An RNA of 177 nucleotides, treated with 2A3 and DMS and read out base by base.
Reactivities are rounded to 0.1 and cut off at 0 and 3.
For 2A3 the reverse transcriptase was SuperScript II with manganese.

RNA sequence: GGGAACGACUCGAGUAGAGUCGAAAACAUUGGGUGAGAUAAACCAAGCCUACGCUAAUUACUUUUCUGGUGUCAGCUAUUUAGCGUUGCUUAACCAGACUGAUUUGCCGGUUUUUAAUGUGACCUAUAUAUAAAUACCAUUCGUGGUAUUUAUAUAAAAAGAAACAACAACAACAAC
Reactivity to 2A3 in 0.01 (KOAc 150mM, MgCl2 10mM, bicine 150mM(pH8.5), 24C), signal-to-noise 3, nucleotides 027 to 126: c010a030u010u060g030g010g010u030g010a160g020a120u100a110a240a000c010c000a010a020g020c000c000u070a070c070g010c000u020a030a020u180u090a210c050u130u230u070u080c010u000g050g030u030g130u140c040a020g000c010u080a060u280u210u220a140g030c060g060u070u100g040c030u050u050a020a020c000c000a000g020a050c010u030g030a010u000u010u050g010c010c010g010g110u040u060u030u140u300a090a020u050g010u020g050a020c010c020u000a020
Reactivity to DMS in 0.01 (KOAc 150mM, MgCl2 10mM, bicine 150mM(pH8.5), 24C), signal-to-noise 5, nucleotides 027 to 126: c080a080u010u010g020g020g010u000g000a190g010a120u010a100a140a040c030c020a060a060g010c020c030u000a080c160g010c010u000a010a010u010u000a060c160u000u010u000u010c030u000g000g020u000g000u010c170a090g010c080u000a040u000u010u010a050g030c060g010u000u000g000c300u000u000a120a040c030c020a040g010a050c300u000g010a040u000u010u000g010c040c090g010g020u010u000u000u010u020a030a080u010g010u000g000a090c020c010u000a170